Conditions: 150 mM KOAc, 10 mM MgCl2 and 150 mM bicine (pH 8.5), 24 C.
The record gives the reactivity of an RNA of 177 nucleotides to 2A3 and DMS.
For DMS, 751 sequencing reads were counted.
For 2A3 the reverse transcriptase was SuperScript II with manganese.
Reactivities are rounded to 0.1 and cut off at 0 and 3.

RNA sequence: GGGAACGACUCGAGUAGAGUCGAAAACGAGUAUCGGAUAUAGACACAGGAUAAGUGAUGUCCCCAGCAGAAUAAGCAUCUAUUGGACAAUAGUAAAACCGGGAUACAUACUUUUGAUUAACAGCACAUCCGCCAUGAUCUUCGGAUCAUGGCGGAUAAAAGAAACAACAACAACAAC
Reactivity to 2A3 in 0.01 (KOAc 150mM, MgCl2 10mM, bicine 150mM(pH8.5), 24C), signal-to-noise 1, nucleotides 027 to 126: c030g000a070g010u200a000u130c000g000g000a000u000a000u000a030g120a030c000a000c000a110g300g000a090u220a300a000g150u000g180a080u000g000u000c030c000c000c000a000g000c000a000g000a300a100u300a240a000g000c000a000u090c000u000a000u000u000g050g070a160c210a110a010u070a140g000u000a010a050a000a140c000c040g110g000g030a030u030a050c010a000u090a000c050u120u030u100u030g040a140u000u040a000a030c080a080g040c090a010c000
Reactivity to DMS in 0.01 (KOAc 150mM, MgCl2 10mM, bicine 150mM(pH8.5), 24C), signal-to-noise 1, nucleotides 027 to 126: c080g050a000g000u040a010u030c090g000g000a150u000a090u010a180g000a080c000a040c030a050g040g030a190u140a070a080g000u000g000a150u000g000u000c070c000c000c120a160g090c000a070g000a070a080u010a090a090g000c150a080u000c120u000a030u120u000g000g010a090c300a000a000u000a010g000u000a150a010a140a150c100c070g000g050g010a070u000a090c220a040u000a010c040u000u070u080u000g040a010u070u000a150a070c070a090g030c240a140c270